[RMDB]
The record gives the reactivity of an RNA of 177 nucleotides to 2A3 and DMS. For 2A3 the reverse transcriptase was SuperScript II with manganese. The RNA was probed in 150 mM KOAc, 10 mM MgCl2 and 150 mM bicine (pH 8.5) at 24 C. The 2A3 profile rests on 5,706 reads.
RNA sequence: GGGAACGACUCGAGUAGAGUCGAAAACGCCGUAAACGAUGCGCACUAAAUCGGUGCCGGUCUGACCCGGUAUCGGUCGACGUGAAAACGAUAAGUGCGCCGCCUGGGGAGUACGGUCGCAAGGCUAUCACGAUUAUAGGUUCGCCUAUAAUCGUGAAAAAGAAACAACAACAACAAC
Reactivity to 2A3 in 0.01 (KOAc 150mM, MgCl2 10mM, bicine 150mM(pH8.5), 24C), signal-to-noise 3, nucleotides 027 to 126: c040g040c010c000g080u070a070a040a050c060g030a130u150g000c010g000c020a000c000u050a020a090a040u030c010g010g010u010g000c010c010g020g020u080c250u220g140a090c010c010c000g000g000u000a010u010c010g000g020u020c040g050a070c020g040u050g080a090a040a010a000c010g010a030u030a120a000g000u000g000c000g000c010c010g010c000c030u080g030g000g000g000a050g050u020a030c000g000g020u020c020g000c060a060a050g040g000c020u050a040
Reactivity to DMS in 0.01 (KOAc 150mM, MgCl2 10mM, bicine 150mM(pH8.5), 24C), signal-to-noise 3, nucleotides 027 to 126: c100g010c010c020g020u010a030a090a120c090g020a100u000g020c040g010c010a010c000u000a140a140a020u000c000g020g030u010g020c020c000g000g020u010c150u000g020a100c270c010c000g000g000u000a010u000c000g000g000u000c080g000a110c040g000u000g000a090a050a120a050c010g020a120u010a070a070g020u000g010c020g020c000c080g010c050c050u010g000g000g000g000a160g010u000a040c070g000g020u010c060g000c100a110a100g000g000c040u000a190